This 177-nucleotide RNA was probed chemically with DMS and 2A3.
The 2A3 profile rests on 1,624 reads.
RNA sequence: GGGAACGACUCGAGUAGAGUCGAAAAGCGACGGAGCACCACCUGCGUGAGAGGGGGGUACCGACACUGUGCUACCACGGGGACGUCCCCCUGGACGGCCGCCGGGAGGCCAUCGCGCAGUUCUCCAGCCACUUUUACAGUUCGCUGUAAAAGUGGCAAAAGAAACAACAACAACAAC
Reactivity to DMS in 0.01 (KOAc 150mM, MgCl2 10mM, bicine 150mM(pH8.5), 24C), signal-to-noise 2, nucleotides 027 to 126: g000c050g000a110c160g000g000a060g010c300a170c010c030a140c110c000u000g000c000g080u000g010a090g020a130g030g000g010g010g000g050u000a020c040c000g010a300c060a050c040u000g000u000g010c290u020a150c150c010a020c020g010g010g000g000a300c300g000u000c000c000c030c020c000u000g000g040a180c230g020g030c020c020g050c060c080g000g000g010a090g010g010c020c000a080u000c020g010c010g000c030a020g010u000u000c010u010c000c040a300
Reactivity to 2A3 in 0.01 (KOAc 150mM, MgCl2 10mM, bicine 150mM(pH8.5), 24C), signal-to-noise 1, nucleotides 027 to 126: g050c090g070a100c130g060g000a060g020c090a060c060c020a030c010c010u020g010c020g040u040g020a120g060a140g060g010g000g010g010g020u050a020c000c000g050a020c130a060c190u040g000u010g040c070u210a180c090c120a010c020g000g000g060g030a000c020g110u130c000c000c060c000c000u000g040g030a020c050g000g000c020c000g030c030c080g180g000g000a120g000g000c000c000a020u000c000g000c000g000c020a010g020u070u000c010u060c010c000a000